[RMDB]
RNA sequence: GGGAACGACUCGAGUAGAGUCGAAAAACAAUUAUCAAUGGGAUUAUAUGGAUAUUUUCUCCAUUUCUGACAUAACUUGGCAAUUUGAAUAUCGAAAUUGUCACGAUAUCGAUAUCAGACAAAGUAAACGUGCACGUAUAUUCGUAUACGUGCACGUAAAAGAAACAACAACAACAAC
Reactivity to 2A3 in 0.01 (KOAc 150mM, MgCl2 10mM, bicine 150mM(pH8.5), 24C), signal-to-noise 3, nucleotides 027 to 126: a000c070a040a060u200u110a100u180c030a020a080u060g030g020g000a020u070u080a090u050a070u120g130g030a040u000a030u080u080u070u030c100u010c000c010a000u040u030u050c030u020g020a030c000a020u080a030a010c000u030u000g000g000c000a020a010u000u000u030g170a160a150u060a080u300c060g020a000a010a010u020u030g000u010c000a010c030g030a060u030a010u040c090g000a010u030a010u130c000a040g020a060c060a030a160a000g070u170a000a140
Reactivity to DMS in 0.01 (KOAc 150mM, MgCl2 10mM, bicine 150mM(pH8.5), 24C), signal-to-noise 2, nucleotides 027 to 126: a090c030a100a040u050u050a060u010c090a040a000u000g000g000g030a120u000u010a050u030a050u020g070g060a160u000a020u000u010u020u000c060u060c000c020a040u020u010u020c030u000g000a020c140a050u030a010a030c070u000u000g000g000c020a000a060u010u000u050g000a110a120u050a050u060c150g000a010a000a020u000u030g000u070c000a040c030g040a070u000a000u000c170g000a060u110a040u070c020a040g000a020c300a060a100a040g040u090a030a090
The data come from the RNA Mapping Database (RMDB), library OK1LIB.
This 177-nucleotide RNA was probed chemically with 2A3 and DMS.
The DMS profile rests on 2,228 reads.